[RMDB]
RNA sequence: GGGAACGACUCGAGUAGAGUCGAAAACUUCUAGAUGCUGGAAGGUCCAAUACUUUGCUUGCCAUACAUAAUAAAGUGAUUGCCCCCUCUGCUGUCAUAGACCAAAUUCCAUGCUUAACUUAGUACACCCAGUAUAGAAGUUCGCUUCUAUACUGGGAAAAGAAACAACAACAACAAC
Reactivity to 2A3 in 0.01 (KOAc 150mM, MgCl2 10mM, bicine 150mM(pH8.5), 24C), signal-to-noise 3, nucleotides 027 to 126: c000u020u010c020u040a110g000a200u140g100c020u040g000g030a040a020g010g030u000c010c030a040a010u080a110c020u080u080u110g070c000u000u030g020c060c000a080u050a110c060a040u140a190a040u130a060a230a030g090u130g210a290u120u240g100c000c000c010c020c000u010c020u030g030c010u020g030u060c020a030u030a020g020a030c000c000a030a090a080u050u000c030c020a000u030g030c000u040u020a060a070c020u020u080a020g030u020a040c020a000
Reactivity to DMS in 0.01 (KOAc 150mM, MgCl2 10mM, bicine 150mM(pH8.5), 24C), signal-to-noise 4, nucleotides 027 to 126: c060u000u000c030u010a050g010a090u010g000c050u010g010g020a060a070g010g000u010c020c030a060a090u020a050c070u000u000u000g000c060u000u000g010c040c050a070u000a110c060a060u010a090a090u000a040a050a080g010u010g000a120u000u000g000c050c030c000c040c020u000c030u000g010c060u000g010u000c070a060u000a100g010a120c060c050a030a050a200u000u000c020c010a040u000g010c040u000u010a070a070c110u010u010a080g010u010a120c220a140
This 177-nucleotide RNA was probed chemically with 2A3 and DMS. The 2A3 profile rests on 1,731 reads. 2A3 adducts were read by reverse transcription with SuperScript II with manganese.